[RMDB]
RNA sequence: GGGAACGACUCGAGUAGAGUCGAAAACGCUGGGCCAUGAAAAGUCUUUAAGAUACAUGAACAACAGCAAACUGAAGCGCGCACGGUUUGACAUGUUCCUGUAUCUUAAAGUCGCUCAUGGCCUGUGCUGAAGCGCGCACGGCAACCGAAAGGUGCGGAAUGUCGUUAGGUUCGCCUAACGACAUUCAAAAGAAACAACAACAACAAC
Reactivity to DMS in 0.01 (KOAc 150mM, MgCl2 10mM, bicine 150mM(pH8.5), 24C), signal-to-noise 1, nucleotides 027 to 156: c030g000c020u000g020g020g020c000c020a020u000g000a030a250a140a140g010u000c000u010u000u000a040a020g020a030u000a000c020a040u010g000a010a020c020a010a160c070a080g050c030a010a000a090c000u010g010a060a140g000c020g050c030g020c040a300c010g010g020u000u000u000g000a000c040a300u020g000u000u000c010c110u000g000u000a040u000c010u000u000a000a010a000g040u000c080g020c170u000c030a000u030g000g100c000c010u030g020u000g000c040u000g020a090a070g000c000g000c030g050c030a140c010g010g010c050a090a170c020c010g000a090a140a120g020g030u000g030c070g000
Reactivity to 2A3 in 0.01 (KOAc 150mM, MgCl2 10mM, bicine 150mM(pH8.5), 24C), signal-to-noise 2, nucleotides 027 to 156: c050g000c020u020g010g000g000c000c000a000u000g050a050a130a070a090g040u050c000u000u000u000a010a000g010a000u000a010c000a020u020g010a030a000c020a030a040c070a110g050c000a010a000a000c010u050g050a210a050g110c090g020c010g040c090a020c040g000g040u000u010u030g120a140c120a100u050g020u000u020c000c030u020g000u000a000u000c000u000u000a000a000a000g000u000c010g020c030u010c000a000u000g000g000c000c000u000g000u000g000c000u030g030a100a030g010c010g020c000g000c010a010c010g000g010c040a060a080c080c000g060a180a020a010g130g000u020g020c040g040